Structure probing data (2A3) for a 207-nucleotide construct. The 2A3 profile rests on 865 reads. Conditions: 150 mM KOAc, 10 mM MgCl2 and 150 mM bicine (pH 8.5), 24 C. The data come from the RNA Mapping Database (RMDB), library RNAMAK.
RNA sequence: GGGAACGACUCGAGUAGAGUCGAAAACAGAACGCCUUCGGGCGUUCUGAAAAAAACCUUUGUGGAUACAGAGCUUGGAUUUAUGGGAGACCCAUUGGGUCUCCAUUGUCAGCUCGUAUCCACUCUGGUAAAAAAGUAGUGGUUUCGACCACUACAAUCGAGAUGUUGUAUUCGUACAACAUCUCGAAAAAGAAACAACAACAACAAC
Reactivity to 2A3 in 0.01 (KOAc 150mM, MgCl2 10mM, bicine 150mM(pH8.5), 24C), signal-to-noise 2, nucleotides 027 to 156: c010a000g020a000a000c010g000c020c020u100u210c300g100g000g000c000g000u000u000c000u000g010a000a000a000a000a020a000a000c020c000u060u010u010g040u020g040g000a050u050a060c100a300g000a070g000c030u160u150g090g020a110u190u300u130a060u200g200g200g010a050g010a000c000c040c290a300u060u300g010g000g000u000c000u000c000c010a000u000u040g000u000c000a010g000c000u010c000g000u010a000u000c000c020a000c000u000c010u000g000g060u040a090a100a000a000a070a000g000u000a000g010u000g030g090u000u090u130c280g130a050c000c000a010c000u000a000c000a000a100